[RMDB]
RNA sequence: GGGAACGACUCGAGUAGAGUCGAAAAGAUAUGGAGUUUGAAGACAUGCUGCGUCGGAAACGACCUAGCAACAGCUUUGACUCCUAAGUCAAACUUCGUUGCACCACUUCGGUGGUGCAACGAAGAACCAAGCUUUUAAGUUCGCUUAAAAGCUUGGAAAAGAAACAACAACAACAAC
Reactivity to 2A3 in 0.01 (KOAc 150mM, MgCl2 10mM, bicine 150mM(pH8.5), 24C), signal-to-noise 2, nucleotides 027 to 126: g010a000u060a040u090g010g000a030g000u070u220u300g250a040a030g060a110c080a140u090g020c000u000g030c010g040u000c010g010g010a080a010a000c000g000a000c000c010u040a010g000c000a030a190c070a150g000c010u030u010u020g010a000c000u000c000c000u020a090a010g040u010c000a070a040a100c010u000u010c010g030u000u010g060c020a010c040c010a060c060u100u100c290g110g000u000g000g100u000g020c050a010a010c010g000a000a000g000a000a010
Reactivity to DMS in 0.01 (KOAc 150mM, MgCl2 10mM, bicine 150mM(pH8.5), 24C), signal-to-noise 2, nucleotides 027 to 126: g010a040u000a300u000g000g000a010g000u020u000u000g030a010a000g000a070c070a230u000g020c000u000g040c300g020u000c020g020g000a040a090a150c000g000a030c010c010u000a020g020c000a000a060c160a220g010c030u000u000u010g010a020c000u000c000c000u010a030a100g010u000c010a120a140a170c000u000u000c000g010u000u000g000c000a000c010c000a010c000u000u020c190g010g020u000g000g010u000g000c030a000a000c000g020a000a000g020a060a130